Chemical mapping of a 207-nucleotide RNA with DMS and 2A3. The data come from the RNA Mapping Database (RMDB), library M2RFOK. For 2A3, 10,128 sequencing reads were counted. The DMS profile rests on 6,291 reads.
RNA sequence: GGGAACGACUCGAGUAGAGUCGAAAAAGUCAGAGGGCGCUACCAUGCAAACUAGGGCUGGCUACUCUUGCACAGAAUCACAUCUCGAUAAUUGUCAGCGCAAGAAGGACAAUUAUACCAUUUAAUGAAAACGUUUACCUGUUCGCAGGUAAACGAACUUACAAAAGUGGUUCGCCACUUUUGUAAGAAAAGAAACAACAACAACAAC
Reactivity to DMS in 0.01 (KOAc 150mM, MgCl2 10mM, bicine 150mM(pH8.5), 24C), signal-to-noise 4, nucleotides 027 to 156: a100g040u000c030a130g020a130g000g020g010c060g030c050u010a100c050c030a090u000g010c050a060a110a150c110u000a130g040g030g030c010u000g010g020c050u000a080c030u000c030u000u010g010c040a120c090a120g010a120a110u000c050a070c110a080u000c040u000c030g010a080u000a020a030u000u000g010u000c020a300g000c080g000c090a090a090g010a110a170g000g010a050c030a030a050u000u000a080u000a050c040c050a110u000u000u000a060a120u010g000a060a060a080a190c030g020u000u000u000a000c000c010u000g030u000u000c290g050c000a000g010g000u000a000a000a020c000g010a010a010
Reactivity to 2A3 in 0.01 (KOAc 150mM, MgCl2 10mM, bicine 150mM(pH8.5), 24C), signal-to-noise 9, nucleotides 027 to 156: a000g030u030c020a010g010a030g030g020g010c030g000c030u050a120c050c030a060u160g010c040a090a070a070c040u090a070g040g050g020c030u020g020g000c010u070a110c020u030c010u050u070g010c040a040c020a070g130a080a040u100c040a040c020a190u020c050u050c090g060a010u010a020a010u020u010g000u000c010a040g040c020g010c120a050a030g060a040a050g090g000a000c010a010a010u020u010a020u020a080c020c040a090u120u120u240a160a130u150g060a030a030a040a030c010g000u000u000u000a000c000c000u010g010u020u030c140g030c070a000g000g000u000a000a000a000c000g000a000a000